[RMDB]
RNA sequence: GGGAACGACUCGAGUAGAGUCGAAAACUUCGCCAGUUCACGCGCCACCAGAUUAAGGUUGCUGUUCAGCUUGUCGUUUGGUGAUUCGAUGUUGAUGGCACACUGCGCACGCAGAUACAGCACACGAGCUCAGUUUUAAUUUCGAUUAAAACUGAGCAAAAGAAACAACAACAACAAC
Reactivity to 2A3 in 0.01 (KOAc 150mM, MgCl2 10mM, bicine 150mM(pH8.5), 24C), signal-to-noise 4, nucleotides 027 to 126: c010u130u090c010g020c030c000a040g010u080u060c060a010c030g020c020g000c030c000a030c000c010a010g010a110u110u090a100a050g060g020u050u040g000c060u080g110u150u120c020a010g020c010u050u050g070u110c050g060u040u100u060g040g000u050g060a120u130u120c050g100a210u090g060u170u090g050a070u050g040g010c030a010c020a010c010u030g020c030g000c020a060c100g000c010a020g010a050u110a090c040a010g060c030a030c020a020c100g060a030
Reactivity to DMS in 0.01 (KOAc 150mM, MgCl2 10mM, bicine 150mM(pH8.5), 24C), signal-to-noise 6, nucleotides 027 to 126: c060u000u000c080g020c030c010a070g020u010u000c040a070c060g010c040g010c300c020a040c020c020a060g010a060u000u020a170a100g010g010u010u000g010c140u010g000u000u010c050a050g010c010u000u000g000u020c100g000u000u010u000g010g020u000g000a110u010u000c040g020a100u000g010u010u010g010a090u010g010g000c040a090c120a120c040u000g000c010g010c110a050c130g000c020a030g000a130u010a050c070a080g000c030a040c100a080c170g010a160
An RNA of 177 nucleotides, treated with 2A3 and DMS and read out base by base. Source: RMDB library OK2TST, as collected in RNAgym. The reactions ran in a buffer of 150 mM KOAc, 10 mM MgCl2 and 150 mM bicine (pH 8.5), at 24 C. For 2A3 the reverse transcriptase was SuperScript II with manganese. In probing experiments dimethyl sulfate is read out at A N1 and C N3, which are open when not base-paired.